The record gives the reactivity of an RNA of 207 nucleotides to DMS and 2A3. For 2A3, 11,001 sequencing reads were counted. The reactions ran in a buffer of 150 mM KOAc, 10 mM MgCl2 and 150 mM bicine (pH 8.5), at 24 C. 2A3 adducts were read by reverse transcription with SuperScript II with manganese. For DMS the reverse transcriptase was MarathonRT. It was measured as part of the RMDB library RNAMAK.
RNA sequence: GGGAACGACUCGAGUAGAGUCGAAAAGUGAAAUUCGUUUCACCGUUAAUCCUAAGUCCAAACGAGGAUCUGGGUAGAAGAUGAAUAUCGGAAACGAUAUUCUAAUCUUCUACACCAGGGAGUUUGGAUAUGGACGAAUGAGUACUUCGGUACUCAACUUAGAAAUGCAAUUCGUUGCAUUUCUAAGAAAAGAAACAACAACAACAAC
Reactivity to DMS in 0.01 (KOAc 150mM, MgCl2 10mM, bicine 150mM(pH8.5), 24C), signal-to-noise 3, nucleotides 027 to 156: g030u010g020a020a030a050u000u010c250g040u000u000u000c020a040c000c030g010u000u000a110a100u000c000c000u000a110a260g020u000c010c000a020a010a010c010g020a140g040g010a030u000c000u000g010g010g030u000a010g010a030a020g020a030u010g000a050a010u000a000u000c010g010g000a150a160a300c010g030a010u000a000u000u000c010u010a090a070u000c000u000u000c000u000a010c000a090c000c000a010g000g030g000a040g010u000u000u000g010g010a000u000a050u000g020g030a060c000g000a180a120u000g000a060g040u000a010c000u000u000c280g040g030u000a000c010u000c000a010a110
Reactivity to 2A3 in 0.01 (KOAc 150mM, MgCl2 10mM, bicine 150mM(pH8.5), 24C), signal-to-noise 4, nucleotides 027 to 156: g040u030g020a010a030a070u170u140c200g050u030u000u020c040a040c040c030g080u070u210a060a050u050c010c000u030a100a020g020u000c000c000a000a000a000c010g010a230g060g000a010u000c000u000g000g000g000u000a000g000a000a000g000a010u030g000a000a000u000a000u000c010g010g000a050a060a050c020g000a000u000a000u000u000c000u010a020a030u000c000u000u000c000u000a000c020a140c010c000a000g000g000g000a000g000u000u000u000g000g000a000u010a020u040g020g020a010c050g090a130a130u130g000a000g010u000a000c030u030u130c290g080g000u000a000c000u010c000a000a010